[RMDB]
RNA sequence: GGGAACGACUCGAGUAGAGUCGAAAAUGGUGGAACAUUAGCAAUAGGUGGUGCCGGGUCUCCAAAAGCUGCAGUUGCUGGAUUGGCAUUGCAAGGAAUAGCUGGUUUAAUCGAUGCCGCAACCUCUAUUUAUUUCUUGCUAUCUGGAGAAGAGCCACAAAUGUCCAGGUUUCGACCUGGACAUUUGAAAAGAAACAACAACAACAAC
Reactivity to DMS in 0.01 (KOAc 150mM, MgCl2 10mM, bicine 150mM(pH8.5), 24C), signal-to-noise 1, nucleotides 027 to 156: u000g020g050u000g000g010a070a080c010a100u000u000a100g030c060a080a090u010a120g020g020u000g000g060u000g040c030c050g040g030g050u000c030u000c020c040a080a040a110a130g010c010u000g000c070a100g020u000u000g060c010u000g010g000a260u000u010g010g040c060a110u000u020g040c010a020a040g000g050a030a020u000a010g000c020u000g020g030u000u000u000a060a120u000c100g010a120u000g050c040c050g020c080a040a030c050c060u000c060u010a060u000u000u000a040u010u000u000c020u000u000g020c020u010a100u010c050u000g020g010a150g010a060a150g000a100g000c000c020a130
Reactivity to 2A3 in 0.01 (KOAc 150mM, MgCl2 10mM, bicine 150mM(pH8.5), 24C), signal-to-noise 2, nucleotides 027 to 156: u120g020g010u020g020g020a060a050c070a100u070u090a030g020c010a010a110u050a190g080g000u040g000g000u010g030c030c020g020g050g010u070c040u000c020c010a000a040a090a040g020c070u030g010c000a070g020u120u100g000c010u030g040g080a150u060u090g010g000c020a010u040u050g020c020a000a030g000g010a020a010u020a010g000c050u040g010g050u050u070u050a040a060u080c100g030a080u130g060c020c020g090c040a020a020c010c000u000c000u020a030u060u140u020a080u050u070u000c030u020u010g030c010u000a080u130c040u040g000g020a050g010a060a020g000a000g020c010c050a050